[RMDB]
RNA sequence: GGGAACGACUCGAGUAGAGUCGAAAACAAAAAUAUGCUGAAAAAUGUUGAAAUUAUUAAAAUGAUUUUCAUUUUUUGAUAGCUGUUGACAGAAGAAAAACCACCAUUUUCUGAAAAAUAGUGGUUUAUAAUAGUGUUUAUUCGUAAACACUAUUAUAAAAGAAACAACAACAACAAC
Reactivity to 2A3 in 0.01 (KOAc 150mM, MgCl2 10mM, bicine 150mM(pH8.5), 24C), signal-to-noise 1, nucleotides 027 to 126: c010a010a200a080a030a010u140a070u200g010c000u010g020a020a000a000a000a020u010g020u200u010g030a000a040a040u060u070a050u040u300a150a150a040a130u070g000a020u020u020u030u040c020a000u000u010u020u000u000u050g130a120u170a080g030c060u040g040u030u020g030a090c070a140g130a090a000g040a040a190a030a030a040c010c000a000c000c000a020u020u020u070u070c100u300g090a030a030a030a030a030u020a000g010u010g000g010u010u000u010
Reactivity to DMS in 0.01 (KOAc 150mM, MgCl2 10mM, bicine 150mM(pH8.5), 24C), signal-to-noise 1, nucleotides 027 to 126: c000a100a130a140a100a210u010a040u010g000c020u000g000a000a040a000a010a000u010g010u050u000g000a010a000a050u000u030a030u050u050a120a050a040a130u000g000a000u000u000u000u010c000a000u000u000u000u000u000u000g020a150u000a010g000c010u000g020u010u000g000a070c130a090g000a060a180g000a050a080a040a070a040c000c000a000c000c040a020u010u010u010u030c250u050g020a100a010a000a000a020u000a100g030u000g000g000u000u010u000
The record gives the reactivity of an RNA of 177 nucleotides to 2A3 and DMS. For DMS, 1,544 sequencing reads were counted. Values are in units of 0.01, from 0 to 300, in steps of 10. 2A3 adducts were read by reverse transcription with SuperScript II with manganese. The RNA was probed in 150 mM KOAc, 10 mM MgCl2 and 150 mM bicine (pH 8.5) at 24 C. Values cover nucleotides 27 to 126. The 2A3 profile rests on 374 reads.